[RMDB]
RNA sequence: GGGAACGACUCGAGUAGAGUCGAAAAGACUUCACCGUGGAUCGCUCGCUGUCACUGGAUCAGGCGACGACCGCCUCGAUCCGCUACCUCAACCUGAUCGGCGACCGGUACCUUGAGCUCGGCCGCGGUCGACAGGCGCAUUCGUGCGCCUGUCGACAAAAGAAACAACAACAACAAC
Reactivity to 2A3 in 0.01 (KOAc 150mM, MgCl2 10mM, bicine 150mM(pH8.5), 24C), signal-to-noise 2, nucleotides 027 to 126: g120a010c050u060u030c030a000c110c010g070u080g150g000a130u000c000g040c020u040c000g000c010u030g020u000c030a010c110u150g010g040a030u000c010a000g000g020c000g070a140c050g120a060c040c070g000c000c000u080c130g010a010u000c000c000g000c030u070a060c000c070u010c100a180a020c000c030u110g050a090u180c020g000g010c000g000a040c020c000g000g040u100a110c000c070u010u050g000a000g000c100u060c040g010g000c000c010g020c000g000